[RMDB]
RNA sequence: GGGAACGACUCGAGUAGAGUCGAAAAGGGGUCAGAAUAGCGACUUUGUCAGCCUCGGGUACUGAAGCCUCCACGGUAUCUCUAGCGUGGGCUUGGAUUUAAGUCGUGAUUUCUGACGGAGGCACCCAAAAUCGCACCGGGUUCGCCCGGUGCGAAACAUGGAUAAUAAGUUCGCUUAUUAUCCAUGAAAAGAAACAACAACAACAAC
Reactivity to DMS in 0.01 (KOAc 150mM, MgCl2 10mM, bicine 150mM(pH8.5), 24C), signal-to-noise 1, nucleotides 027 to 156: g000g000g030g030u000c000a030g000a070a030u000a270g010c020g000a030c030u000u000u010g010u000c030a090g000c020c010u010c060g010g010g060u000a060c020u000g000a050a190g030c020c030u000c010c020a300c030g040g000u000a020u000c020u000c030u000a120g040c100g020u010g030g040g010c020u000u000g040g000a080u010u000u010a050a050g020u010c000g050u000g000a200u010u000u010c000u000g020a030c020g010g020a050g000g050c040a080c000c010c010a070a090a120a160u000c010g020c000a040c020c000g000g000g070u000u000c300g000c000c000c010g000g020u000g030c020g000a000a010a100
Reactivity to 2A3 in 0.01 (KOAc 150mM, MgCl2 10mM, bicine 150mM(pH8.5), 24C), signal-to-noise 3, nucleotides 027 to 156: g110g020g040g000u010c010a010g000a010a010u030a020g010c000g020a010c020u080u100u120g080u090c040a010g010c000c000u030c030g020g000g010u020a020c010u020g060a140a040g020c000c040u020c040c010a040c010g000g000u030a030u010c070u030c110u240a090g150c070g120u280g020g020g030c010u040u140g160g020a090u250u280u210a040a000g000u000c000g010u020g020a050u010u030u010c000u000g000a000c020g000g010a000g010g020c030a020c000c000c000a080a090a000a060u030c000g000c000a000c000c000g060g000g000u070u060c150g030c030c020c000g000g030u000g010c000g000a000a000a000